[RMDB]
RNA sequence: GGGAACGACUCGAGUAGAGUCGAAAAGAUAUGGACCAUUCGUGCGCUUCAUCGAUCACUUGUCGGAAACGACAAGUGGGAGAAGGCACGAGAUGGUCCUAAGUCAAAAGACAUGUUCGCAUGUCAACGCUUUCAUGCAGUUCGCUGCAUGAAAGCGAAAAGAAACAACAACAACAAC
Reactivity to 2A3 in 0.01 (KOAc 150mM, MgCl2 10mM, bicine 150mM(pH8.5), 24C), signal-to-noise 1, nucleotides 027 to 126: g080a020u150a040u210g000g020a000c010c020a000u000u020c000g040u010g000c300g150c300u050u000c020a300u300c040g180a090u100c000a010c000u000u020g000u000c010g070g010a140a050a130c030g000a000c000a000a010g000u010g000g010g000a050g000a000a000g020g010c050a000c000g000a010g000a020u010g000g020u010c000c000u000a000a000g040u030c050a000a000a000a160g000a020c010a020u050g010u040u120c300g000c150a000u000g000u000c010a010a030
Reactivity to DMS in 0.01 (KOAc 150mM, MgCl2 10mM, bicine 150mM(pH8.5), 24C), signal-to-noise 2, nucleotides 027 to 126: g010a070u000a300u010g100g010a020c020c010a030u000u000c020g000u020g000c030g010c030u020u010c040a300u000c170g010a160u000c000a000c000u010u000g000u000c000g000g000a200a080a210c020g000a000c000a000a020g010u010g000g010g010a040g010a040a030g000g030c020a000c010g000a030g000a020u000g010g000u000c010c000u000a010a090g010u000c080a060a130a120a160g020a060c020a010u000g010u010u010c270g000c020a000u000g000u000c020a150a120